An RNA of 177 nucleotides, treated with DMS and 2A3 and read out base by base. It was measured as part of the RMDB library M2PK90. For DMS the reverse transcriptase was MarathonRT. For 2A3 the reverse transcriptase was SuperScript II with manganese. The 2A3 profile rests on 3,548 reads. Reactivities are given for positions 27 through 126. The RNA was probed in 150 mM KOAc, 10 mM MgCl2 and 150 mM bicine (pH 8.5) at 24 C.

[RMDB]
RNA sequence: GGGAACGACUCGAGUAGAGUCGAAAAGCAGCAGUGAAUUAAAAUAUACAUGAAGAUCAAGAACAAGAUACAAACGGCAAGUAUCGUUCGAUCCAUGAGCCGAAUAAUAUCACAAAGAAGAAGAAAAGUUUAAUAACGAAUUCGUUCGUUAUUAAACAAAAGAAACAACAACAACAAC
Reactivity to DMS in 0.01 (KOAc 150mM, MgCl2 10mM, bicine 150mM(pH8.5), 24C), signal-to-noise 3, nucleotides 027 to 126: g000c050a050g010c090a100g020u000g000a050a050u000u010a030a070a070a100u000a100u000a090c020a020u000g010a110a120g020a010u000c050a080a100g000a020a020c040a100a120g000a020u000a020c030a040a090a090c130g010g010c070a100a110g000u000a010u000c010g020u010u000c050g000a040u020c020c020a030u010g000a060g010c190c090g010a060a040u010a030a050u000a100u000c010a020c060a050a040a100g000a080a060g010a080a100g000a060a050a070a070
Reactivity to 2A3 in 0.01 (KOAc 150mM, MgCl2 10mM, bicine 150mM(pH8.5), 24C), signal-to-noise 3, nucleotides 027 to 126: g050c040a000g000c010a020g020u010g020a020a030u120u090a060a070a070a110u260a030u060a030c010a030u040g060a130a050g010a010u040c020a040a050g010a040a000c040a100a080g000a020u020a030c030a010a240a010c050g100g000c060a080a090g000u010a010u010c000g000u040u030c020g010a010u000c000c000a020u050g010a000g030c020c010g020a000a000u050a010a010u090a040u050c010a000c000a070a140a020g130a070a000g040a060a000g050a070a150a030a000